RNA sequence: GGGAACGACUCGAGUAGAGUCGAAAACAGUCCGAUUCGACCAUGACGAUCAGGGUUUCUACCACGUCCAUCUUUCUCUGACUUGACUCUCUCUUCUCUUCGGAGGAUUGGGAGGAUAGGAUGGGAUCUUGGCGGCAUAUUUCGAUAUGCCGCCAAGAAAAGAAACAACAACAACAAC
Reactivity to 2A3 in 0.01 (KOAc 150mM, MgCl2 10mM, bicine 150mM(pH8.5), 24C), signal-to-noise 2, nucleotides 027 to 126: c040a020g040u040c000c040g050a110u060u120c040g020a040c040c070a140u200g030a060c080g040a020u050c120a160g020g010g000u000u050u140c090u070a070c040c040a040c050g010u000c080c020a050u040c060u000u090u000c020u000c010u020g220a050c000u040u050g030a000c000u000c000u000c000u000c020u040u000c040u000c000u000u000c130g090g000a000g000g000a000u030u020g000g000g000a000g050g000a000u000a000g000g000a000u030g030g020g000a010u010